[RMDB]
RNA sequence: GGGAACGACUCGAGUAGAGUCGAAAAGAUAUGGACAAGAGGGAGCUGGCCAAUUACAGGGACUAUGUCGGAAACGACAUAGAGAACCCUGUAAUUGGCGACAGCGAAGAACUCUUGUCCUAAGUCACCAUUCUGAAUAGUUCGCUAUUCAGAAUGGAAAAGAAACAACAACAACAAC
Reactivity to 2A3 in 0.01 (KOAc 150mM, MgCl2 10mM, bicine 150mM(pH8.5), 24C), signal-to-noise 1, nucleotides 027 to 126: g000a040u090a040u140g000g000a010c000a000a030g000a020g000g020g020a050g000c010u020g000g030c000c000a020a000u020u010a010c020a000g000g000g280a200c010u010a000u000g010u000c010g020g030a050a080a090c010g000a000c000a000u020a000g040a040g000a040a030c000c000c010u010g000u000a000a000u000u000g060g000c000g000a010c010a010g040c010g040a190a030g020a010a000c000u010c010u000u010g000u000c000c000u000a020a020g020u000c010a010
Reactivity to DMS in 0.01 (KOAc 150mM, MgCl2 10mM, bicine 150mM(pH8.5), 24C), signal-to-noise 4, nucleotides 027 to 126: g010a060u000a300u010g020g010a030c000a020a030g000a010g030g010g010a120g020c010u000g000g020c010c000a000a020u000u000a000c000a020g030g020g040a160c010u000a010u000g010u000c020g010g000a150a130a250c000g010a020c000a000u000a000g000a130g010a180a100c010c000c000u010g010u000a000a000u000u000g010g000c010g000a070c010a010g030c000g000a090a160g000a100a170c000u000c000u000u010g000u000c000c000u000a020a110g000u010c050a300